Structure probing data (DMS and 2A3) for a 177-nucleotide construct. DMS adducts were read by reverse transcription with MarathonRT.
RNA sequence: GGGAACGACUCGAGUAGAGUCGAAAAGAGAACGGGACCAUUACGGACGCCGUGGAUUGUGCGUUGGACCCUCUGUCGGAGACGAAGUGCACCCUGAAGUCGUUCACGGUGGAGAAGGGGAUUUAUCGGUCCUUUAUACUUUCGAGUAUAAAGGACCAAAAGAAACAACAACAACAAC
Reactivity to DMS in 0.01 (KOAc 150mM, MgCl2 10mM, bicine 150mM(pH8.5), 24C), signal-to-noise 3, nucleotides 027 to 126: g010a090g010a100a080c120g030g000g010a130c020c030a080u000u000a120c140g010g010a120c070g030c010c010g020u000g000g010a080u000u000g040u020g020c050g010u000u000g010g000a110c080c040c010u000c040u010g010u010c100g000g010a110g000a100c050g010a040a060g010u000g000c070a120c020c050c040u000g020a070a070g020u010c030g010u000u010c020a100c060g000g010u000g010g000a100g010a110a050g000g010g010g000a130u000u000u000a070u010c210
Reactivity to 2A3 in 0.01 (KOAc 150mM, MgCl2 10mM, bicine 150mM(pH8.5), 24C), signal-to-noise 2, nucleotides 027 to 126: g130a010g010a110a000c010g000g000g000a010c030c000a050u190u230a050c110g100g020a030c010g050c060c030g030u040g020g040a120u180u140g040u030g070c010g040u020u050g060g010a030c070c040c000u000c020u030g200u090c070g030g010a060g000a040c030g050a050a010g040u020g120c030a040c030c000c050u080g130a070a020g070u060c020g000u020u030c010a010c060g000g030u060g010g060a080g010a040a020g000g000g050g000a020u090u140u150a220u210c040
2A3 adducts were read by reverse transcription with SuperScript II with manganese.
The DMS profile rests on 2,687 reads.